[RMDB]
RNA sequence: GGGAACGACUCGAGUAGAGUCGAAAAUCAGAUUGCGUCCAUCAGCCAGAGUGUGGCGCGUUUCUCCUCUGCAUCCGGCGUGGAGGUGGACAAGGUCGCUGAAGCCUUCGGGAAGCUGACCACAGACAUGAUUAGCACACUUCGGUGUGCUAAUCAUAAAAGAAACAACAACAACAAC
Reactivity to 2A3 in 0.01 (KOAc 150mM, MgCl2 10mM, bicine 150mM(pH8.5), 24C), signal-to-noise 1, nucleotides 027 to 126: u080c040a010g090a100u060u270g010c030g010u000c010c000a020u040c010a020g150c060c000a060g060a050g130u150g020u110g020g000c010g010c010g020u040u090u000c060u000c000c040u030c000u000g010c020a050u010c020c100g160g050c100g030u040g020g000a020g000g010u020g000g020a010c020a130a090g040g000u020c040g090c140u080g020a110a060g010c000c020u000u080c070g040g010g040a040a010g000c040u070g070a120c000c010a020c020a050g100a040c070
Reactivity to DMS in 0.01 (KOAc 150mM, MgCl2 10mM, bicine 150mM(pH8.5), 24C), signal-to-noise 2, nucleotides 027 to 126: u000c060a090g010a080u010u000g000c080g010u010c000c020a030u000c040a140g000c040c040a040g020a090g020u000g030u010g020g000c090g000c040g000u000u000u010c000u000c010c020u000c030u000g040c010a130u010c070c060g000g010c060g000u010g030g000a090g000g010u000g010g000a070c130a080a140g010g030u010c030g020c080u000g000a120a140g000c050c040u000u020c150g010g000g010a150a050g030c010u010g010a100c050c010a070c120a060g010a120c200